An RNA of 177 nucleotides, treated with DMS and 2A3 and read out base by base. For DMS the reverse transcriptase was MarathonRT. Reactivities are rounded to 0.1 and cut off at 0 and 3. The 2A3 profile rests on 1,315 reads. The RNA was probed in 150 mM KOAc, 10 mM MgCl2 and 150 mM bicine (pH 8.5) at 24 C. It was measured as part of the RMDB library OK2TRN. DMS (dimethyl sulfate) methylates the pairing face of unpaired adenines and cytosines. Reactivities are given for positions 27 through 126.
RNA sequence: GGGAACGACUCGAGUAGAGUCGAAAAUGGAGCAGGAGACCAUGGACCUCCUCAACAACGAACUGCUCUACAAUAUGAUGGUGCAGACGGUCUCCCACCAGUUCUCCCAGGUCCAGCUGGUGCUCAGCGUCGUCAAACCAUUCGUGGUUUGACGACGAAAAGAAACAACAACAACAAC
Reactivity to DMS in 0.01 (KOAc 150mM, MgCl2 10mM, bicine 150mM(pH8.5), 24C), signal-to-noise 2, nucleotides 027 to 126: u010g010g030a060g000c120a130g020g000a080g010a050c000c020a200u000g030g010a060c010c050u000c030c030u000c190a030a070c150a050a030c060g000a110a210c020u000g000c040u000c020u000a050c100a100a100u000a050u020g030a090u010g030g040u000g010c030a040g020a140c100g000g000u000c130u000c000c010c200a140c030c010a010g000u000u000c070u000c000c000c040a070g000g000u010c050c050a090g010c050u020g000g000u000g010c080u010c010a140g000
Reactivity to 2A3 in 0.01 (KOAc 150mM, MgCl2 10mM, bicine 150mM(pH8.5), 24C), signal-to-noise 1, nucleotides 027 to 126: u090g060g000a060g020c040a000g050g020a020g020a010c020c000a020u050g010g080a060c000c010u040c000c090u150c080a020a080c000a010a030c050g030a020a020c000u010g010c000u000c030u090a040c040a070a180u150a100u300g100a080u050g090g040u070g000c000a020g000a090c020g060g040u010c030u000c000c010c000a010c010c000a020g020u080u000c040u020c060c000c000a030g070g020u050c020c000a010g000c020u050g040g000u110g000c000u030c030a030g080